[RMDB]
RNA sequence: GGGAACGACUCGAGUAGAGUCGAAAACAAUUUGACAGAUCUCACGUAUACUUCAGGGAAAUUGAAUUGGUCAUCGUGAUUGGGUGAAUCUAUGUUUAUAUAUCUCAUAACUAUAAGAUUCAGUACAUUAACCUCUUUCGUUCGCGAAAGAGGUUAAAAAAGAAACAACAACAACAAC
Reactivity to 2A3 in 0.01 (KOAc 150mM, MgCl2 10mM, bicine 150mM(pH8.5), 24C), signal-to-noise 2, nucleotides 027 to 126: c030a000a170u120u060u020g080a010c020a010g050a030u020c000u000c010a000c070g000u010a000u000a130c020u070u080c000a010g070g080g220a060a160a190u140u060g050a040a170u100u090g100g000u090c170a040u080c050g030u030g060a080u050u160g080g050g000u060g000a010a000u000c000u000a000u110g010u000u150u000a100u050a010u010a130u000c090u000c130a000u050a000a000c040u090a090u020a300a020g000a000u000u040c000a000g070u080a050c000a000
Reactivity to DMS in 0.01 (KOAc 150mM, MgCl2 10mM, bicine 150mM(pH8.5), 24C), signal-to-noise 2, nucleotides 027 to 126: c070a040a060u000u000u030g000a140c040a150g010a110u040c090u020c000a020c070g010u000a090u020a130c060u000u020c040a070g000g010g000a090a080a080u040u020g000a010a040u000u040g000g000u010c020a070u030c070g000u060g020a020u030u000g000g030g050u000g000a050a040u000c000u000a050u000g010u000u000u000a040u000a150u000a060u040c170u030c110a080u010a000a050c030u020a060u000a120a060g010a030u010u010c030a040g040u080a090c090a140